[RMDB]
RNA sequence: GGGAACGACUCGAGUAGAGUCGAAAAAUGCAGUAAAUGUUGACUUUGCCCAGUACCCAGUAAAUGAGAUGUUGCUGCUCUAAAUGGGCCUUUAUGUCCACACCUCUCAAAUCACAGUGCCCCAGGACAAACCUCUGUCAUUCGUGACAGAGGUUUGAAAAGAAACAACAACAACAAC
Reactivity to 2A3 in 0.01 (KOAc 150mM, MgCl2 10mM, bicine 150mM(pH8.5), 24C), signal-to-noise 3, nucleotides 027 to 126: a000u190g040c060a030g050u170a070a130a040u110g030u130u050g040a060c010u010u050u060g000c000c000c000a010g020u080a100c020c000c000a010g040u070a020a110a030u230g030a120g040a060u100g050u110u040g000c060u030g010c000u050c000u070a130a210a090u140g010g030g010c000c000u180u150u030a120u160g020u000c000c000a030c000a010c040c000u010c000u000c000a120a140a040u040c020a030c010a070g060u040g090c000c020c000c010a030g040g000a000
Reactivity to DMS in 0.01 (KOAc 150mM, MgCl2 10mM, bicine 150mM(pH8.5), 24C), signal-to-noise 2, nucleotides 027 to 126: a110u060g000c080a050g020u020a030a040a060u000g000u000u000g020a260c130u000u000u020g000c000c020c020a100g000u010a080c030c000c030a140g020u010a040a090a040u000g000a200g010a070u010g010u000u000g010c030u000g000c030u010c040u010a030a070a080u030g020g000g000c020c080u020u000u010a060u040g020u010c000c000a010c070a040c040c010u000c020u010c050a010a100a110u060c080a060c050a090g000u000g010c010c010c000c040a100g020g010a180